[RMDB]
RNA sequence: GGGAACGACUCGAGUAGAGUCGAAAAUGGAAGUUUCCACUGGAGAGUCAAAAACAUCACUUUAGAUUAGGGUGGCUUGGGGAGAACUUGGAGCCAAAUGAAGGCCCCAAGUGCCAGUGAUGCUGGAGAAAGGGGCAGAGCUAGAGCGAGAGAAAGACAUCCGGUAUACUUUCGAGUAUACCGGAUGAAAAGAAACAACAACAACAAC
Reactivity to 2A3 in 0.01 (KOAc 150mM, MgCl2 10mM, bicine 150mM(pH8.5), 24C), signal-to-noise 2, nucleotides 027 to 156: u090g040g030a060a020g030u020u070u020c020c000a020c080u040g020g020a030g000a020g060u060c060a060a010a000a020a030c020a040u090c030a030c060u080u170u160a050g020a130u120u100a090g060g080g010u100g060g020c080u040u060g020g000g030g000a090g010a030a010c010u010u020g020g010a010g000c010c030a000a100a160u230g050a150a080g040g000c010c000c000c000a010a000g000u010g080c020c000a000g000u030g020a040u120g060c010u000g010g030a040g010a040a070a020g010g020g000g030c040a010g020a000g020c010u050a030g010a010g040c030g030a020g010a000g000a050a040a000g060a020
Reactivity to DMS in 0.01 (KOAc 150mM, MgCl2 10mM, bicine 150mM(pH8.5), 24C), signal-to-noise 1, nucleotides 027 to 156: u010g000g010a110a130g000u010u010u010c040c030a070c110u000g060g010a080g000a110g000u030c030a080a090a060a120a030c060a060u000c010a000c000u010u000u000a060g000a190u010u010a090g010g010g010u010g040g010c080u010u000g060g010g000g000a110g000a050a050c000u030u010g000g000a030g000c040c020a060a110a200u000g010a220a300g040g020c000c000c000c010a010a030g050u000g000c000c090a110g070u010g020a080u000g010c010u000g000g000a170g010a070a060a200g020g010g030g000c060a040g000a070g030c060u000a070g000a120g010c000g000a090g010a140g010a050a070a120g000a160
Chemical mapping of a 207-nucleotide RNA with 2A3 and DMS.
2A3 adducts were read by reverse transcription with SuperScript II with manganese.